[RMDB]
Notes
Structure probing data (2A3 and DMS) for a 170-nucleotide construct. For 2A3, 1,515 sequencing reads were counted. For DMS the reverse transcriptase was MarathonRT. The RNA was probed in 150 mM KOAc, 10 mM MgCl2 and 150 mM bicine (pH 8.5) at 24 C. For 2A3 the reverse transcriptase was SuperScript II with manganese. The data come from the RNA Mapping Database (RMDB), library 15KLIB. Values cover nucleotides 27 to 129.
RNA sequence: GGGAACGACUCGAGUAGAGUCGAAAAAUAGAUUGGUUGUGGUUUGCAUUUGAGACUGGUUUGGCAUACAUGCUCUAUACCUCGGCCUUCAACUGGUUGUUGUUGGCAGGUACAUUGCAUUAUUUCUCGAACAAUUGCUUCGGCAAUUGUAAAAGAAACAACAACAACAAC
Reactivity to 2A3 in 0.01 (KOAc 150mM, MgCl2 10mM, bicine 150mM(pH8.5), 24C), signal-to-noise 2, nucleotides 027 to 129: a000u060a020g200a000u050u140g060g000u010u000g000u090g020g080u000u020u030g060c190a230u130u050u040g130a110g150a200c070u050g070g150u000u000u060g000g000c000a000u060a040c000a060u110g000c000u000c000u050a130u000a010c000c000u000c080g100g000c000c000u000u000c000a030a080c070u120g300g000u300u290g020u000u010g000u010u010g010g020c010a000g000g000u000a000c010a070u000u000g020c000a000u040u030a040u000u200u000c000u000c000g000a040
Reactivity to DMS in 0.01 (KOAc 150mM, MgCl2 10mM, bicine 150mM(pH8.5), 24C), signal-to-noise 2, nucleotides 027 to 129: a160u000a040g000a180u040u000g010g050u000u000g050u030g020g050u040u040u070g000c000a080u020u000u100g020a090g000a160c170u010g000g050u000u040u060g000g040c190a050u020a000c190a110u030g030c030u010c090u040a170u020a100c130c070u000c090g070g020c000c030u000u000c010a020a020c040u080g050g060u090u060g020u130u010g050u000u000g000g080c020a010g000g030u030a060c070a080u010u020g000c010a060u050u000a150u000u000u090c010u070c100g050a170